The record gives the reactivity of an RNA of 177 nucleotides to DMS. The DMS profile rests on 884 reads. Conditions: 150 mM KOAc, 10 mM MgCl2 and 150 mM bicine (pH 8.5), 24 C. Values cover nucleotides 27 to 126.
RNA sequence: GGGAACGACUCGAGUAGAGUCGAAAACUUGCGGGUUAACUGCUAAAAUAUAGGCCAUAGAUAAGAAAGUUGUGAUACCGCCUAAGAUUUCUCUUUUAAAGUUUGUUCCAUAUUUAUCGAACUGGAAUGGGAAUAGGUUAUUCGUAACCUAUUCCCAAAAAGAAACAACAACAACAAC
Reactivity to DMS in 0.01 (KOAc 150mM, MgCl2 10mM, bicine 150mM(pH8.5), 24C), signal-to-noise 2, nucleotides 027 to 126: c090u000u010g030c030g010g020g010u010u010a130a070c000u000g030c030u000a050a090a180a090u000a050u000a090g000g020c100c080a070u000a100g020a110u010a050a100g010a160a110a040g000u000u010g020u010g000a170u000a050c030c020g000c010c290u010a090a100g010a220u000u000u000c050u000c000u000u000u030u000a020a180a070g010u000u000u020g010u010u010c010c000a060u000a050u010u010u010a120u010c010g000a140a090c130u000g020g010a100a110